[RMDB]
RNA sequence: GGGAACGACUCGAGUAGAGUCGAAAAGCACGUAUCUUCGGAUACGUGCAAAUAAUAUCAGCGGUAAGCAGGCGUAAAAUAUUACCGCUGAACGCCUGCUUAAAAGUCUUCCCUUCGGGGAAGACAACAUUAACCACUCGUUCGCGAGUGGUUAAUGAAAAGAAACAACAACAACAAC
Reactivity to DMS in 0.01 (KOAc 150mM, MgCl2 10mM, bicine 150mM(pH8.5), 24C), signal-to-noise 3, nucleotides 027 to 126: g010c000a000c000g010u000a000u000c010u010u010c160g040g000a010u000a000c000g000u000g010c010a000a030a030u000a110a100u000a100u000c070a070g020c060g000g000u000a030a030g010c060a030g000g020c050g000u010a040a080a070a080u000a140u000u000a100c050c040g000c050u000g000a060a010c060g010c010c020u010g010c040u010u000a040a080a110a060g000u000c000u000u000c000c000c000u000u010c180g030g000g000g000a000a000g010a000c000a030a060
Reactivity to 2A3 in 0.01 (KOAc 150mM, MgCl2 10mM, bicine 150mM(pH8.5), 24C), signal-to-noise 2, nucleotides 027 to 126: g030c000a000c000g000u010a000u000c000u030u050c200g080g010a010u000a000c000g000u000g000c000a000a000a000u010a000a000u070a050u090c020a020g020c010g110g040u030a040a000g020c020a010g070g000c040g040u080a070a130a110a070u220a090u120u120a050c010c010g000c020u010g010a010a000c010g010c010c000u010g010c000u040u040a010a040a020a030g010u000c000u000u010c000c000c000u000u040c220g070g010g000g000a000a000g000a000c000a000a000